[RMDB]
RNA sequence: GGGAACGACUCGAGUAGAGUCGAAAAGCGAAUGGCGUGAGGAGCGCGGGCAGGGCGUAGUGCAUAAACCGAUUCCUGGUUGGCAGAGUACGCUUGAGCAACGUGGGUUUGUCGGCUGUGCGCGGCAACCGCCAGCGUGAUUCGUCACGCUGGCGGUAAAAGAAACAACAACAACAAC
Reactivity to 2A3 in 0.01 (KOAc 150mM, MgCl2 10mM, bicine 150mM(pH8.5), 24C), signal-to-noise 2, nucleotides 027 to 126: g170c090g060a120a050u090g030g010c020g010u070g010a070g040g090a010g000c010g010c060g030g000g000c050a080g030g070g000c060g070u070a020g020u040g040c010a030u130a070a040a020c020c000g040a070u050u170c000c070u090g110g010u000u030g040g000c070a020g020a020g130u030a000c070g000c000u000u020g020a020g110c030a010a030c010g030u060g000g110g000u090u050u100g050u020c020g000g000c040u040g040u050g070c080g040c020g070g010c040a050
Reactivity to DMS in 0.01 (KOAc 150mM, MgCl2 10mM, bicine 150mM(pH8.5), 24C), signal-to-noise 1, nucleotides 027 to 126: g030c100g000a080a030u020g010g000c000g000u090g000a110g000g000a230g000c050g080c030g000g000g020c000a300g000g060g010c030g000u000a050g000u000g010c050a070u010a020a020a150c010c030g050a150u010u020c080c040u010g040g000u030u030g000g020c080a110g000a040g000u000a000c060g040c000u000u000g000a210g020c120a030a270c070g000u040g020g030g030u020u010u010g000u000c000g000g030c080u010g060u000g000c000g080c020g000g000c000a090